[RMDB]
RNA sequence: GGGAACGACUCGAGUAGAGUCGAAAAUGAAAUUGCCGGGAGGGAAGCGGAUGGGGGCUGGCGAUGCGCCCCGGUCGUAUGCGGAACGGCUUCUGCUGGUCCGCCGAUCGGCUCGGGGCGUGGACUGCGUCCCUGACGGGUUCGCCCGUCAGGGACGAAAAGAAACAACAACAACAAC
Reactivity to 2A3 in 0.01 (KOAc 150mM, MgCl2 10mM, bicine 150mM(pH8.5), 24C), signal-to-noise 1, nucleotides 027 to 126: u180g000a000a000a040u000u030g140c050c010g000g000g100a300g000g010g070a000a030g000c070g040g000a090u140g190g000g000g000g000c010u050g060g000c010g000a010u140g010c000g010c000c000c000c000g000g100u000c000g030u030a000u080g010c030g010g010a000a000c010g000g000c030u140u210c110u200g000c000u030g000g060u000c000c000g010c000c010g000a070u160c000g050g000c090u190c070g000g000g050g060c010g000u010g000g000a000c050u220g010